[RMDB]
Source: RMDB library OK2TST, as collected in RNAgym.
Structure probing data (DMS and 2A3) for a 177-nucleotide construct.
The DMS profile rests on 2,712 reads.
The 2A3 profile rests on 1,899 reads.
High DMS reactivity at an A or C suggests that its Watson-Crick edge is free.
Conditions: 150 mM KOAc, 10 mM MgCl2 and 150 mM bicine (pH 8.5), 24 C.
2A3 adducts were read by reverse transcription with SuperScript II with manganese.
RNA sequence: GGGAACGACUCGAGUAGAGUCGAAAAGCACGAGAUUUUGCGCCUCGAGCCGGUGGUCGGCACCCUGUACCGCCGCGCGGCACAGGAGAUGACUGUGGGCGGCGAAGUCAUCCCGCAGGGCAGCGUGCAGACAGUCGAAUUUCGAUUCGACUGUCUGAAAAGAAACAACAACAACAAC
Reactivity to DMS in 0.01 (KOAc 150mM, MgCl2 10mM, bicine 150mM(pH8.5), 24C), signal-to-noise 3, nucleotides 027 to 126: g010c050a030c050g000a130g000a090u000u000u000u010g030c040g010c050c030u010c100g010a140g030c050c030g020g040u000g010g040u010c030g010g000c110a180c070c060c030u000g010u000a060c040c000g040c040c120g000c110g030c010g000g010c010a030c030a060g000g020a140g010a110u030g010a060c020u000g010u010g010g000g000c110g020g010c030g000a070a050g010u010c040a050u000c020c130c000g010c060a050g000g020g010c110a090g010c000g020u000g000
Reactivity to 2A3 in 0.01 (KOAc 150mM, MgCl2 10mM, bicine 150mM(pH8.5), 24C), signal-to-noise 2, nucleotides 027 to 126: g060c010a010c100g080a100g000a130u030u090u190u250g020c080g040c020c000u050c090g030a040g010c000c010g000g050u140g010g100u140c040g030g010c010a050c000c030c000u000g010u110a050c010c000g030c000c040g070c040g030c030g050g010c010a000c020a040g070g050a150g030a090u180g040a040c010u040g020u110g010g010g030c040g050g000c040g010a000a000g030u000c030a040u030c020c030c010g060c060a020g000g070g030c010a020g040c030g010u010g040